RNA sequence: GGGAACGACUCGAGUAGAGUCGAAAACCGUUUGUCGAAAGGGAAGCCGGUUAAUAUUCCGGCACCUGGAUGUGGAUUCUCCACGGCAACGUAACUGAACGCGGAGACGUCGGCAGGAGUCCUGGGACGAUGCUGGAAACUUCGGUUUCCAGCAUCGAAAAGAAACAACAACAACAAC
Reactivity to 2A3 in 0.01 (KOAc 150mM, MgCl2 10mM, bicine 150mM(pH8.5), 24C), signal-to-noise 1, nucleotides 027 to 126: c010c010g040u030u110u200g130u050c010g100a070a000a000g000g010g020a140a000g000c010c000g010g010u000u000a160a000u100a210u100u020c000c000g000g000c000a010c010c000u000g000g000a060u080g070u090g050g030a050u110u030c000u040c030c030a020c000g010g110c040a070a140c000g010u050a080a000c030u090g120a080a090c020g000c010g000g140a130g030a010c010g040u070c180g000g000c030a080g010g030a000g010u000c000c000u060g000g000g000a030
Reactivity to DMS in 0.01 (KOAc 150mM, MgCl2 10mM, bicine 150mM(pH8.5), 24C), signal-to-noise 1, nucleotides 027 to 126: c040c000g000u030u030u020g060u010c010g030a180a120a000g000g000g020a170a200g060c040c000g060g000u000u010a130a110u030a140u050u060c000c000g060g010c010a000c010c000u000g000g070a220u000g000u110g000g000a130u000u050c020u020c030c020a070c010g100g000c120a060a090c170g000u000a160a120c230u020g010a120a070c200g000c030g000g000a070g000a020c050g000u000c050g000g030c090a060g000g040a050g020u030c040c010u000g010g000g000a240